Source: RMDB libraries RFM100 and RFMREP, as collected in RNAgym. This 177-nucleotide RNA was probed chemically with 2A3 and DMS. The RNA was probed in 150 mM KOAc, 10 mM MgCl2 and 150 mM bicine (pH 8.5) at 24 C. For DMS the reverse transcriptase was MarathonRT. Reactivities are given for positions 27 through 126.
[RMDB]
RNA sequence: GGGAACGACUCGAGUAGAGUCGAAAAUCCUCUGGGCUCUUGGUAUUCUACUGGGUGGCAAGGGCUGACCGGCAAGGGAAGAAGUUUCCAGUCAUCUUGUGCCACUUCGGUGCGCAGAUGGGCGAGGUAUCCGACUACGAUUCGUCGUAGUCGGAUAAAAAGAAACAACAACAACAAC
Reactivity to 2A3 in 0.01 (KOAc 150mM, MgCl2 10mM, bicine 150mM(pH8.5), 24C), signal-to-noise 2, nucleotides 027 to 126: u010c010c000u030c040u020g020g050g000c020u000c020u070u030g130g010u190a100u180u060c100u080a210c060u130g000g000g000u020g000g100c010a060a050g000g000g000c000u000g000a040c010c010g030g000c080a070a110g010g030g040a030a080g080a110a030g100u030u050u000c030c000a020g010u030c000a010u000c020u060u040g000u040g080c140c000a020c000u080u050c130g030g000u020g000c010g000c000a000g020a050u060g000g030g090c080g060a080g060g030
Reactivity to DMS in 0.01 (KOAc 150mM, MgCl2 10mM, bicine 150mM(pH8.5), 24C), signal-to-noise 3, nucleotides 027 to 126: u030c000c010u000c100u020g000g010g020c010u010c000u010u010g000g000u020a040u010u000c040u040a110c220u020g000g000g020u000g010g000c040a070a040g010g000g000c060u000g000a030c010c070g010g000c190a070a080g000g000g020a060a080g010a080a180g000u010u010u010c010c020a230g000u000c010a010u010c020u000u060g040u010g010c090c010a000c030u020u030c110g000g020u010g000c040g040c010a000g000a030u020g000g000g010c040g030a090g020g000